Structure probing data (DMS and 2A3) for a 177-nucleotide construct.
Reactivities are rounded to 0.1 and cut off at 0 and 3.
For 2A3 the reverse transcriptase was SuperScript II with manganese.
The RNA was probed in 150 mM KOAc, 10 mM MgCl2 and 150 mM bicine (pH 8.5) at 24 C.
DMS adducts were read by reverse transcription with MarathonRT.
2A3 is a SHAPE reagent: it acylates the 2'-hydroxyl of flexible nucleotides of all four kinds.
[RMDB]
RNA sequence: GGGAACGACUCGAGUAGAGUCGAAAAAGAGGCAUGGUCGUUUACCGCGACUUUCCAGUGAAUGGAUCAACCUGUUGAUGCAGGUAGUGUGUAUCAUGCGAAUCGUUCUGCGAUUCGUAACUGCAGGUGUAAUUUUCAGCUUCGGCUGAAAAUUACAAAAAGAAACAACAACAACAAC
Reactivity to DMS in 0.01 (KOAc 150mM, MgCl2 10mM, bicine 150mM(pH8.5), 24C), signal-to-noise 3, nucleotides 027 to 126: a070g010a120g000g000c080a040u000g010g010u000c010g020u010u020u020a140c130c100g000c030g010a020c040u000u030u010c020c020a080g020u020g000a140a100u010g000g020a050u030c160a120a110c010c040u000g000u000u010g010a030u000g030c030a120g020g020u040a060g010u010g000u020g000u000a020u000c030a110u000g010c000g020a010a010u000c000g060u000u030c260u030g010c000g010a000u000u000c010g010u000a000a150c230u000g000c020a030g010g030
Reactivity to 2A3 in 0.01 (KOAc 150mM, MgCl2 10mM, bicine 150mM(pH8.5), 24C), signal-to-noise 4, nucleotides 027 to 126: a010g110a030g040g030c120a070u090g030g010u000c000g010u050u070u090a060c020c020g020c000g020a000c000u070u040u040c010c000a020g020u040g290a130a210u060g050g040a030u080c040a040a040c000c010u010g010u050u020g040a020u060g000c000a000g100g090u090a060g080u120g000u000g000u060a010u030c020a000u020g010c000g000a000a000u000c000g000u060u160c150u250g030c010g010a000u000u020c010g000u000a050a020c070u110g000c000a010g010g020